[RMDB]
RNA sequence: GGGAACGACUCGAGUAGAGUCGAAAAUCUAUUCUUUCUUUUUGAAAGAGGAGACUGCUGGACCAAACGCCCGAACCGGGAUGAGCCGCAUGCCGGGCGGGAGGGACGAGGUCGGGGAAGGGGAGACAUGGACAAGCGUUCGCGCUUGUCAAAAGAAACAACAACAACAAC
Reactivity to DMS in 0.01 (KOAc 150mM, MgCl2 10mM, bicine 150mM(pH8.5), 24C), signal-to-noise 2, nucleotides 027 to 129: u030c030u010a080u060u010c070u000u000u010c020u000u000u050u050u120g000a010a020a030g000a040g010g010a030g020a030c100u000g020c050u030g050g030a070c030c020a050a170a050c090g020c040c010c040g050a130a120c180c020g010g110g000a020u000g010a110g000c130c100g060c140a080u080g010c110c020g000g010g050c070g000g040g000a100g030g000g000a120c170g020a000g020g030u050c100g030g000g000g060a160a040g010g000g020g000a140g050a080c080a030u040g010
Reactivity to 2A3 in 0.01 (KOAc 150mM, MgCl2 10mM, bicine 150mM(pH8.5), 24C), signal-to-noise 3, nucleotides 027 to 129: u020c020u030a120u010u120c000u060u030u000c010u030u300u060u090u300g020a020a010a030g000a000g000g010a010g000a010c020u030g020c060u030g040g060a090c050c000a180a140a100c090g010c040c000c000g050a090a050c040c020g000g000g040a050u050g000a020g050c010c020g070c070a030u050g120c010c000g010g000g020c090g020g010g000a120g020g020g000a000c040g030a050g000g070u070c040g000g010g000g020a040a150g010g010g010g000a070g020a000c050a070u180g020
The record gives the reactivity of an RNA of 170 nucleotides to DMS and 2A3. The reactions ran in a buffer of 150 mM KOAc, 10 mM MgCl2 and 150 mM bicine (pH 8.5), at 24 C. In probing experiments dimethyl sulfate is read out at A N1 and C N3, which are open when not base-paired. The 2A3 profile rests on 4,264 reads.